[RMDB]
RNA sequence: GGGAACGACUCGAGUAGAGUCGAAAACUUUCAGAGGCAGCCUGCUGCUCCCUCCCUCCCUCUUCUCCCUUCCUCGAGGCCGCCCUGGCCAGUGCUCUGCAGAGUCCUGGGGCUGGGACAGCAGCUCCGCUGUUCGGAUAUUCGUAUCCGAACAGCGAAAAGAAACAACAACAACAAC
Reactivity to DMS in 0.01 (KOAc 150mM, MgCl2 10mM, bicine 150mM(pH8.5), 24C), signal-to-noise 1, nucleotides 027 to 126: c090u000u000u030c080a110g020a080g040g020c130a020g020c130c050u010g010c020u000g000c140u010c030c020c010u000c030c010c060u000c060c020c010u010c080u010u000c020u000c020c020c010u000u000c000c020u000c100g030a190g010g030c000c000g000c070c060c050u010g000g000c020c020a100g020u010g010c020u020c030u000g010c030a110g030a090g020u000c050c040u050g010g000g010g020c100u000g000g000g000a090c040a030g000c020a030g000c030u000c050

Chemical mapping of a 177-nucleotide RNA with DMS. For DMS the reverse transcriptase was MarathonRT. For DMS, 1,457 sequencing reads were counted.